[RMDB]
RNA sequence: GGGAACGACUCGAGUAGAGUCGAAAAUGGCAGACCCGAAGCCACUCGAUCUAUACCUGAGCAGGUUGAAGUUUAGCGAAAGCUAGAUGGAGGACCGAACCAGUUCUGAUGUGCAAAUCGUUUGGAUGUUACUGUAUAUCUUCGGAUAUACAGUAACAAAAGAAACAACAACAACAAC
Reactivity to DMS in 0.01 (KOAc 150mM, MgCl2 10mM, bicine 150mM(pH8.5), 24C), signal-to-noise 7, nucleotides 027 to 126: u010g010g020c050a080g010a140c040c020c040g010a130a120g010c010c010a050c050u000c010g010a030u010c040u000a100u000a050c040c030u000g010a050g020c060a120g010g010u000u000g010a290a150g010u000u000u000a010g010c000g010a130a070a150g010c000u000a010g000a010u010g000g010a210g000g010a040c030c020g010a090a110c100c060a080g010u000u010c040u010g010a080u010g010u000g000c100a070a060a040u010c060g010u000u000u010g010g010a300u010
Reactivity to 2A3 in 0.01 (KOAc 150mM, MgCl2 10mM, bicine 150mM(pH8.5), 24C), signal-to-noise 9, nucleotides 027 to 126: u140g070g000c040a020g040a160c000c000c030g050a050a010g020c000c010a020c010u010c010g050a050u010c030u070a060u050a100c010c020u040g020a020g020c080a040g060g010u020u040g020a040a010g010u000u020u020a010g000c020g050a120a030a010g000c000u000a010g000a020u030g020g020a050g100g090a010c010c010g010a030a030c030c020a020g010u090u020c030u070g150a180u130g030u050g050c030a030a040a080u060c040g020u020u030u030g060g020a070u050
This 177-nucleotide RNA was probed chemically with DMS and 2A3.
It was measured as part of the RMDB libraries RFM100 and RFMREP.
DMS adducts were read by reverse transcription with MarathonRT.
Reactivities are given for positions 27 through 126.
Conditions: 150 mM KOAc, 10 mM MgCl2 and 150 mM bicine (pH 8.5), 24 C.
For 2A3 the reverse transcriptase was SuperScript II with manganese.